[RMDB]
RNA sequence: GGGAACGACUCGAGUAGAGUCGAAAAGAUCACCUGUUCGCAGGUGAUCAAUCUCCCACUUGAUCGAAGUCUCUCAGCCUCGUUGCCCACGAGGCACGGGCGUAUUGAUCCGCUUCGGCGGAUCAAAACCAUGACACUUUUUCGAAAGUGUCAUGGUAAAAGAAACAACAACAACAAC
Reactivity to 2A3 in 0.01 (KOAc 150mM, MgCl2 10mM, bicine 150mM(pH8.5), 24C), signal-to-noise 4, nucleotides 027 to 126: g000a000u000c010a000c000c010u000g030u050u070c270g000c100a000g020g000u010g000a000u000c000a000a010u010c010u010c030c010c020a040c050u120u290g090a140u100c080g110a080a040g100u020c010u000c010u030c140a020g000c000c000u080c060g090u130u160g050c000c020c000a120c100g020a200g000g000c000a000c010g000g000g000c010g010u040a060u030u070g000a000u000c000c000g020c000u060u070c210g130g000c000g000g010a000u010c000a000a000a000
Reactivity to DMS in 0.01 (KOAc 150mM, MgCl2 10mM, bicine 150mM(pH8.5), 24C), signal-to-noise 4, nucleotides 027 to 126: g010a000u010c000a000c000c000u010g010u000u020c200g020c010a010g020g000u000g010a000u000c010a020a100u020c190u010c010c010c020a120c160u010u000g000a080u000c060g000a080a100g000u000c020u000c030u000c130a150g010c020c000u000c020g010u010u010g020c020c040c020a150c240g020a140g010g000c000a030c070g000g010g000c030g010u010a030u010u000g000a010u000c010c010g000c000u000u010c190g030g010c000g010g000a000u000c000a000a020a150